[RMDB]
RNA sequence: GGGAACGACUCGAGUAGAGUCGAAAAGAUAUGGAGUGCUAAUACGAACUACUCUAUCUAAUCGGAAACGAUUAGUAAGGAGCGGAUAACACUCCUAAGUCAAAAGGACAUCGUUCGCGAUGUCCAACCUCAGCAUCUAGUUCGCUAGAUGCUGAGGAAAAGAAACAACAACAACAAC
Reactivity to DMS in 0.01 (KOAc 150mM, MgCl2 10mM, bicine 150mM(pH8.5), 24C), signal-to-noise 2, nucleotides 027 to 126: g010a060u000a300u000g000g000a060g010u000g020c030u000a100a080u020a080c030g000a070a090c050u010a300c000u000c000u010a230u010c000u000a000a000u010c000g000g020a140a100a140c040g010a000u000u000a000g020u030a070a190g000g050a000g000c030g010g000a080u000a050a120c000a000c000u000c000c000u000a000a030g000u000c030a020a040a090a170g000g000a020c000a010u000c000g000u010u000c080g000c000g030a000u000g010u000c010c000a030a020
Reactivity to 2A3 in 0.01 (KOAc 150mM, MgCl2 10mM, bicine 150mM(pH8.5), 24C), signal-to-noise 3, nucleotides 027 to 126: g020a020u080a030u100g000g010a010g010u000g010c050u050a100a060u250a280c020g090a130a070c130u300a110c010u290c010u030a090u070c000u000a030a000u000c020g000g000a070a020a000c000g010a000u000u020a000g010u020a150a300g080g000a050g050c060g000g000a020u040a060a000c000a000c000u000c000c000u010a080a030g020u010c000a060a010a080a160g020g000a000c000a000u000c000g050u040u060c300g010c050g140a000u000g000u000c000c010a010a010